[RMDB]
An RNA of 177 nucleotides, treated with DMS and 2A3 and read out base by base. Conditions: 150 mM KOAc, 10 mM MgCl2 and 150 mM bicine (pH 8.5), 24 C. DMS adducts were read by reverse transcription with MarathonRT.
RNA sequence: GGGAACGACUCGAGUAGAGUCGAAAACACUCAAUCGUAAUUAUGUUUUUACUGGUUAUCAUAUAACCAAAAAUAGUAAAGUGCAGCUCGGUGAGUACAUUUUCGAGCGCAUUGAUUAUAGUGAUGCCUUUCCCAAUAGGUUCGCCUAUUGGGAAAGAAAAGAAACAACAACAACAAC
Reactivity to DMS in 0.01 (KOAc 150mM, MgCl2 10mM, bicine 150mM(pH8.5), 24C), signal-to-noise 2, nucleotides 027 to 126: c030a040c000u010c270a130a050u000c010g050u010a090a060u010u000a030u000g000u000u000u000u000u040a090c170u010g020g010u000u000a020u010c150a110u040a300u010a000a000c010c000a030a040a020a010a030u000a080g010u010a030a020a070g000u000g010c000a060g050c000u000c010g040g010u010g000a050g020u020a070c090a090u000u000u000u000c000g010a010g000c010g000c000a010u010u000g010a010u010u000a030u000a030g000u000g000a140u010g020c120
Reactivity to 2A3 in 0.01 (KOAc 150mM, MgCl2 10mM, bicine 150mM(pH8.5), 24C), signal-to-noise 2, nucleotides 027 to 126: c020a010c010u040c000a030a030u050c020g070u110a070a110u030u080a090u050g070u010u060u030u030u070a080c060u010g000g000u000u020a020u040c060a030u070a010u060a250a040c000c000a130a000a000a030a000u100a040g050u030a000a080a020g000u000g040c020a050g000c080u000c010g020g010u020g020a050g080u100a090c040a190u040u070u020u060c000g010a020g000c010g000c010a000u000u070g000a000u010u050a060u070a090g010u000g060a040u090g040c010